Structure probing data (DMS and 2A3) for a 177-nucleotide construct. It was measured as part of the RMDB library 15KREP. The RNA was probed in 150 mM KOAc, 10 mM MgCl2 and 150 mM bicine (pH 8.5) at 24 C. DMS adducts were read by reverse transcription with MarathonRT.
RNA sequence: GGGAACGACUCGAGUAGAGUCGAAAAGGCGAGGGUCCUCAGUUCUCUCUAUUCUUUCUUUUUGAAAGAGGAGACUGCUGGACCAAACGCCCGAACCGGGAUGAGCCGCAUGCCGGGCGGGAGGGACCUGUAACAUUUUGUUCGCAAAAUGUUACAGAAAAGAAACAACAACAACAAC
Reactivity to DMS in 0.01 (KOAc 150mM, MgCl2 10mM, bicine 150mM(pH8.5), 24C), signal-to-noise 2, nucleotides 027 to 126: g000g000c030g010a180g000g020g000u010c000c000u000c010a010g000u010u000c050u010c000u020c140u020a170u000u000c000u000u000u010c000u000u020u000u000u030g010a010a000a000g000a050g000g000a040g020a040c010u000g000c180u000g010g000a020c010c020a020a080a090c020g000c010c010c070g000a050a100c030c020g000g010g010a040u000g000a190g020c170c190g020c070a010u000g000c010c030g000g000g000c020g010g000g000a060g000g000g010a210c280
Reactivity to 2A3 in 0.01 (KOAc 150mM, MgCl2 10mM, bicine 150mM(pH8.5), 24C), signal-to-noise 1, nucleotides 027 to 126: g010g030c050g020a030g130g030g000u000c010c000u000c000a050g020u260u070c020u010c030u040c050u070a210u200u010c030u050u020u020c070u120u300u140u180u230g020a000a010a000g000a010g020g000a020g010a000c000u010g000c000u020g010g010a010c020c010a000a000a000c010g000c020c000c020g030a070a060c000c020g000g020g020a050u050g020a040g190c090c040g150c160a040u140g050c010c010g070g040g060c120g000g040g010a090g010g000g050a020c000